[RMDB]
Conditions: 150 mM KOAc, 10 mM MgCl2 and 150 mM bicine (pH 8.5), 24 C. An RNA of 177 nucleotides, treated with 2A3 and DMS and read out base by base. The 2A3 profile rests on 1,764 reads.

RNA sequence: GGGAACGACUCGAGUAGAGUCGAAAAUGCUGGUGGGCAUCUAUGGCUCCAAGGAGCUCUUCAUCAAUGAGUACAGGAGCCUGCUGGCGGAGAAGCUGCUGGGCAAGACGGAUUACGAGUGCGACCGAAGCACAAAGGGAUUCGUCCCUUUGUGCUUAAAAGAAACAACAACAACAAC
Reactivity to 2A3 in 0.01 (KOAc 150mM, MgCl2 10mM, bicine 150mM(pH8.5), 24C), signal-to-noise 2, nucleotides 027 to 126: u100g010c010u010g070g020u050g030g040g020c010a070u000c030u130a220u090g030g000c000u000c000c030a070a100g160g020a140g060c050u020c080u230u070c040a260u040c030a070a200u200g010a020g010u030a050c050a030g040g000a010g020c000c010u010g000c000u010g000g040c020g050g000a060g040a020a020g050c020u070g000c000u050g020g020g000c010a010a030g050a030c030g060g000a050u100u110a050c040g030a010g060u020g000c000g040a040c030c010g000
Reactivity to DMS in 0.01 (KOAc 150mM, MgCl2 10mM, bicine 150mM(pH8.5), 24C), signal-to-noise 3, nucleotides 027 to 126: u020g010c040u010g020g020u000g010g000g020c030a070u000c040u000a090u010g010g000c000u000c010c090a090a160g020g000a160g010c080u000c060u000u020c170a090u000c240a100a110u010g010a040g010u000a100c080a130g010g000a040g020c020c010u000g030c040u020g000g000c030g020g020a110g010a050a100g010c040u000g010c040u010g010g000g010c040a040a050g000a090c030g000g000a090u000u000a060c080g000a110g000u000g000c050g010a130c050c060g020